[RMDB]
RNA sequence: GGGAACGACUCGAGUAGAGUCGAAAAGUCAAGGGGUCCGAAAGGUACUCCUGAUGUACCUUGGCACUGAGUAAAGUCUUGGGUACCUAGGGAAAGGUGAAGGAGCUAGACUCCUUACCAAGUACUUUCCUAUCAUAGACUUCGGUCUAUGAUAGGAAAAAGAAACAACAACAACAAC
Reactivity to DMS in 0.01 (KOAc 150mM, MgCl2 10mM, bicine 150mM(pH8.5), 24C), signal-to-noise 4, nucleotides 027 to 126: g030u020c020a050a020g000g000g010g020u000c000c010g010a070a070a150g020g010u040a010c000u000c010c000u000g010a010u000g020u000a050c030c000u000u020g000g010c120a040c010u000g010a160g020u010a120a150a110g000u020c000u010u000g000g010g010u000a030c010c140u000a040g000g000g010a050a140a070g000g010u000g010a010a000g010g000a010g000c030u040a140g000a170c000u000c000c030u000u000a010c010c000a030a060g000u000a070c020u010u010
Reactivity to 2A3 in 0.01 (KOAc 150mM, MgCl2 10mM, bicine 150mM(pH8.5), 24C), signal-to-noise 3, nucleotides 027 to 126: g040u040c060a040a060g030g000g000g020u000c020c010g050a070a010a000g040g040u110a020c000u000c000c010u000g000a000u050g010u000a010c000c000u000u020g040g010c190a020c070u070g070a070g170u290a170a180a000g020u000c000u010u020g010g000g040u040a050c050c060u090a060g000g000g030a010a030a020g020g000u110g100a050a020g010g010a010g000c040u130a040g090a290c000u010c000c000u000u000a010c000c000a010a010g020u000a020c010u020u010